[RMDB]
About this RNA: Source: RMDB library TTRDEL, as collected in RNAgym. Chemical mapping of a 177-nucleotide RNA with 2A3 and DMS. The DMS profile rests on 2,172 reads. For DMS the reverse transcriptase was MarathonRT. The reactions ran in a buffer of 150 mM KOAc, 10 mM MgCl2 and 150 mM bicine (pH 8.5), at 24 C.
RNA sequence: GGGAACGACUCGAGUAGAGUCGAAAAGAUAUGGACGGAUGUGCAAGGCGAUUCGGAAACGAACGCUGAUGACCACAAUCGUCCUAAGUCAAACUAUGUAGAUAUCGUUCGCGAUAUCUACAUAGAAGGUAGUUGAUUACUUCGGUAAUCAACUACCAAAAGAAACAACAACAACAAC
Reactivity to 2A3 in 0.01 (KOAc 150mM, MgCl2 10mM, bicine 150mM(pH8.5), 24C), signal-to-noise 4, nucleotides 027 to 126: g020a040u070a030u140g010g010a000c010g010g040a020u030g000u010g000c060a140a250g010g000c040g250a300u020u000c000g010g060a070a050a030c000g000a010a000c010g030c000u010g050a080u100g010a010c030c010a010c010a010a070u030c000g000u000c020c000u020a140a020g030u010c030a050a040a110c020u000a000u000g010u000a000g000a000u000a000u000c030g020u080u070c260g020c020g180a000u000a000u000c000u000a000c000a000u000a000g000a020a020
Reactivity to DMS in 0.01 (KOAc 150mM, MgCl2 10mM, bicine 150mM(pH8.5), 24C), signal-to-noise 3, nucleotides 027 to 126: g010a040u000a300u000g000g010a010c000g010g000a020u010g020u000g000c010a080a160g000g010c010g000a200u000u010c000g020g010a050a080a100c010g030a020a030c000g000c000u000g010a050u000g000a140c300c000a000c020a000a030u000c000g010u000c000c000u000a020a070g010u000c030a070a130a250c000u000a000u000g010u000a000g000a010u000a000u000c010g010u000u010c270g020c000g010a010u000a000u000c000u000a000c000a000u000a000g010a090a090